Conditions: 150 mM KOAc, 10 mM MgCl2 and 150 mM bicine (pH 8.5), 24 C.
This 177-nucleotide RNA was probed chemically with DMS.
[RMDB]
RNA sequence: GGGAACGACUCGAGUAGAGUCGAAAAGAUAUGGACGCGAUAAGAUGAUGGAGCUUGGACCAGAGUCUUCUUCGGAAACGAAGAAGACUCUGCUAGCUCCUACCAUCUUUUGACGCGUCCUAAGUCACAAUGUGAACCUCUUCGGAGGUUCACAUUGAAAAGAAACAACAACAACAAC
Reactivity to DMS in 0.01 (KOAc 150mM, MgCl2 10mM, bicine 150mM(pH8.5), 24C), signal-to-noise 1, nucleotides 027 to 126: g000a070u000a300u010g020g010a030c010g030c010g000a170u030a000a010g040a010u010g010a060u000g000g000a000g030c010u010u020g030g000a070c300c030a040g010a020g000u010c000u000u000c010u010u000c000g000g010a110a070a210c000g010a030a010g010a020a000g030a020c010u000c000u000g020c030u000a020g020c010u010c000c050u010a010c080c000a030u000c000u000u010u000u000g020a270c080g020c040g040u010c000c000u000a000a050g010u010c050a300
For DMS, 1,132 sequencing reads were counted.